The record gives the reactivity of an RNA of 177 nucleotides to DMS and 2A3. Values cover nucleotides 27 to 126. The 2A3 profile rests on 3,086 reads. The RNA was probed in 150 mM KOAc, 10 mM MgCl2 and 150 mM bicine (pH 8.5) at 24 C.
RNA sequence: GGGAACGACUCGAGUAGAGUCGAAAAUAAAAGACUCUACUGAGGUAGGAAAUAAAGAGAGAGAGAGCUACCCUCGUCUGUCAGUCACUCUCUGUCUGACUCUCUCUCUCGAGUCGUUCGCAAAAAAGUGAUGAAUUUAGUUCGCUAAAUUCAUCACAAAAGAAACAACAACAACAAC
Reactivity to DMS in 0.01 (KOAc 150mM, MgCl2 10mM, bicine 150mM(pH8.5), 24C), signal-to-noise 1, nucleotides 027 to 126: u010a160a160a170a200g010a000c000u000c000u020a000c000u010g000a020g020g000u000a030g020g000a100a060a030u000a040a070a050g000a010g000a030g000a030g000a040g000a140g050c030u000a040c040c020c010u000c160g030u040c130u040g010u000c020a010g030u000c090a150c200u000c230u000c050u010g020u010c000u000g000a070c080u000c000u000c000u020c010u000c020u000c010g000a000g000u000c000g000u000u020c010g000c040a000a060a080a050a020a060
Reactivity to 2A3 in 0.01 (KOAc 150mM, MgCl2 10mM, bicine 150mM(pH8.5), 24C), signal-to-noise 2, nucleotides 027 to 126: u160a000a120a020a020g000a000c000u030c000u030a000c010u040g030a010g010g010u030a020g020g080a020a210a030u140a020a120a000g020a000g000a000g000a000g010a000g010a000g040c010u010a020c000c040c000u050c060g160u040c050u050g040u010c010a000g010u040c030a060c110u150c030u040c050u060g010u030c020u010g000a000c000u000c000u000c000u030c010u000c000u000c020g000a000g000u000c000g010u000u030c020g020c020a080a130a030a010a000a000